Notes
Structure probing data (DMS and 2A3) for a 177-nucleotide construct. Reactivities are given for positions 27 through 126. The reactions ran in a buffer of 150 mM KOAc, 10 mM MgCl2 and 150 mM bicine (pH 8.5), at 24 C. The 2A3 profile rests on 439 reads. Source: RMDB library RFM100, as collected in RNAgym. DMS adducts were read by reverse transcription with MarathonRT.
[RMDB]
RNA sequence: GGGAACGACUCGAGUAGAGUCGAAAAGUUCUAGUAGGAAGUAUUGUGUGAUUAUUUUUUUUUCACACUCAGAACGUAAGUGCCAAGGCUCUCACUAUGAAGAGGAGUCACAGGAUUGGCUGGGGUGGAAGUCCAGUUUGUUCGCAAACUGGACUUCAAAAGAAACAACAACAACAAC
Reactivity to DMS in 0.01 (KOAc 150mM, MgCl2 10mM, bicine 150mM(pH8.5), 24C), signal-to-noise 1, nucleotides 027 to 126: g000u010u000c000u000a030g000u120a150g000g010a070a130g010u040a160u010u000g000u020g010u000g000a000u000u000a000u000u000u000u000u000u000u000u000u020c030a060c000a000c000u000c130a050g000a050a070c150g000u010a070a030g000u020g000c010c000a070a040g010g000c010u000c010u000c010a120c060u020a070u010g060a070a190g000a220g000g000a010g000u000c000a150c300a060g000g000a090u000u000g010g000c010u020g000g000g000g010u050g010
Reactivity to 2A3 in 0.01 (KOAc 150mM, MgCl2 10mM, bicine 150mM(pH8.5), 24C), signal-to-noise 1, nucleotides 027 to 126: g000u040u000c040u080a000g050u060a050g040g190a040a020g040u140a120u210u060g020u040g000u010g030a060u000u000a180u000u140u000u110u000u000u000u000u000c010a020c000a000c000u010c000a040g010a030a010c040g010u260a000a050g160u040g040c000c000a000a000g040g000c000u040c030u070c030a030c020u050a120u300g070a080a050g000a100g120g000a000g000u000c060a000c010a160g030g040a060u010u040g000g000c000u020g000g000g070g050u040g000